The record gives the reactivity of an RNA of 177 nucleotides to 2A3. The RNA was probed in 150 mM KOAc, 10 mM MgCl2 and 150 mM bicine (pH 8.5) at 24 C. For 2A3 the reverse transcriptase was SuperScript II with manganese. It was measured as part of the RMDB library OK1LIB.
RNA sequence: GGGAACGACUCGAGUAGAGUCGAAAAUUCAGGUGCUUGGAUUACGCAACUUAUAACAGUAUUCAAUGUCAUUAAAGACGGUAUGUUAGCAUACUUAGCUAUUUUUACUGGUAUUAAUGCGGCUAAAAGGCCGCCUCGUAUUCGUACGAGGCGGCCUAAAAGAAACAACAACAACAAC
Reactivity to 2A3 in 0.01 (KOAc 150mM, MgCl2 10mM, bicine 150mM(pH8.5), 24C), signal-to-noise 1, nucleotides 027 to 126: u160u220c160a110g220g000u040g100c040u250u090g050g090a200u040u110a050c000g030c020a040a040c000u050u050a140u000a230a000c000a000g070u130a000u090u250c010a050a070u090g000u000c000a070u000u130a200a000a090g270a000c020g050g000u000a000u000g270u040u050a000g300c000a000u000a050c000u090u000a000g130c000u040a000u030u000u030u000u000a000c000u000g060g000u090a070u100u000a040a000u080g060c060g000g000c070u020a080a070a000